[RMDB]
RNA sequence: GGGAACGACUCGAGUAGAGUCGAAAAUGGCCCUCGGCCCCCGCGGCCUCCUACCUCCCUUGGCCGGCCGGCGUGCUGGCGGGGCCGGGGGACUAGCGUAGCCGUUAGGCCGAGCGCGUGCUCGACAAAUGCUAUAUGCUUUCGAGCAUAUAGCAUUAAAAGAAACAACAACAACAAC
Reactivity to DMS in 0.01 (KOAc 150mM, MgCl2 10mM, bicine 150mM(pH8.5), 24C), signal-to-noise 6, nucleotides 027 to 126: u000g010g000c000c020c010u000c000g010g000c030c010c020c040c200g020c040g010g010c000c020u000c090c030u000a160c090c080u000c050c010c050u000u010g020g020c030c040g010g000c020c040g010g000c100g020u000g020c020u010g010g030c040g010g010g020g020c000c000g010g000g000g010g010a010c030u000a040g000c090g020u010a110g020c030c010g010u010u020a110g020g010c010c040g010a050g010c070g010c150g010u010g010c020u010c010g000a080c140a080
Reactivity to 2A3 in 0.01 (KOAc 150mM, MgCl2 10mM, bicine 150mM(pH8.5), 24C), signal-to-noise 1, nucleotides 027 to 126: u030g040g000c000c010c000u000c010g040g000c100c000c000c000c030g020c000g020g000c030c020u040c010c010u030a150c030c040u050c040c040c020u030u090g030g010c030c000g030g010c010c000g030g020c040g030u140g020c040u040g030g040c020g030g030g010g000c000c000g000g010g020g000g000a010c000u020a020g060c050g050u020a010g010c010c000g050u090u080a060g000g030c010c000g010a000g020c050g020c010g100u160g030c020u020c030g060a090c050a030